[RMDB]
RNA sequence: GGGAACGACUCGAGUAGAGUCGAAAAGACACGACGGAGACGUCGUGUCAAAGAGUGGGAAACCACUCAAAGAGCCACAGCUUCGGCUGUGGCUCAAGGCGCGGUACCGUCCGCGGAACAACCGGAACACUCGUUUUAAUUUCGAUUAAAACGAGUGAAAAGAAACAACAACAACAAC
Reactivity to DMS in 0.01 (KOAc 150mM, MgCl2 10mM, bicine 150mM(pH8.5), 24C), signal-to-noise 1, nucleotides 027 to 126: g000a010c000a000c020g020a020c000g000g000a300g010a250c000g080u010c010g020u010g010u010c010a030a090a050g000a030g000u000g000g010g000a120a060a220c010c010a010c010u010c000a040a130a110g000a040g050c000c010a090c000a040g000c000u000u020c240g020g000c000u000g140u000g010g000c000u000c000a070a130g030g040c070g020c040g000g000u010a160c140c140g040u000c020c000g040c000g010g000a060a070c110a030a080c080c040g000g030a090a270
Reactivity to 2A3 in 0.01 (KOAc 150mM, MgCl2 10mM, bicine 150mM(pH8.5), 24C), signal-to-noise 1, nucleotides 027 to 126: g000a000c000a010c030g030a000c010g040g010a060g020a040c010g000u010c010g000u000g000u000c000a010a000a000g000a000g000u000g000g000g000a000a030a090c000c000a000c010u020c000a070a050a000g010a000g000c000c000a000c010a010g040c000u170u200c300g140g000c020u050g000u010g030g010c000u000c000a000a000g000g000c020g000c020g000g100u280a210c040c040g080u110c010c010g040c000g040g000a030a000c030a010a040c020c000g080g000a050a040